[RMDB]
RNA sequence: GGGAACGACUCGAGUAGAGUCGAAAAGGUGAGCGGCAAGGAUCCCCAGGUGGUGAAACUGAACGAUGAUUUGAGAGCCGUUUUAAAUGGCCCAUGUGAGUCCUCCACCAUGCCGUAUGAAUCCUUGGAUACGGUCAGCAUUCGUGCUGACCGUAUCAAAAGAAACAACAACAACAAC
Reactivity to DMS in 0.01 (KOAc 150mM, MgCl2 10mM, bicine 150mM(pH8.5), 24C), signal-to-noise 2, nucleotides 027 to 126: g010g040u000g000a070g000c030g020g100c010a070a100g000g020a110u010c050c000c010c040a020g000g000u000g000g010u000g040a040a060a130c110u050g000a120a100c100g000a100u000g000a260u020u030u030g010a140g000a140g030c000c000g000u010u000u020u000a020a090a050u030g000g000c000c020c030a050u050g000u060g000a100g000u000c040c070u000c000c030a000c000c000a130u040g000c040c000g040u000a040u000g010a070a130u010c000c000u000u020g020
Reactivity to 2A3 in 0.01 (KOAc 150mM, MgCl2 10mM, bicine 150mM(pH8.5), 24C), signal-to-noise 2, nucleotides 027 to 126: g020g050u070g030a030g010c010g120g020c010a000a180g200g010a120u100c050c060c000c000a060g000g000u080g050g010u040g010a070a000a000c090u080g110a100a020c090g080a110u200g050a100u020u160u090g230a230g030a090g120c000c000g100u000u000u000u110a200a240a020u060g030g000c000c000c000a030u020g010u020g120a000g030u070c000c000u100c000c000a010c000c000a000u020g000c000c000g000u000a020u070g000a020a050u090c010c000u000u040g030
Conditions: 150 mM KOAc, 10 mM MgCl2 and 150 mM bicine (pH 8.5), 24 C. Chemical mapping of a 177-nucleotide RNA with DMS and 2A3. Source: RMDB library OK1LIB, as collected in RNAgym. DMS adducts were read by reverse transcription with MarathonRT. Reactivities are rounded to 0.1 and cut off at 0 and 3. For 2A3 the reverse transcriptase was SuperScript II with manganese. For DMS, 2,242 sequencing reads were counted.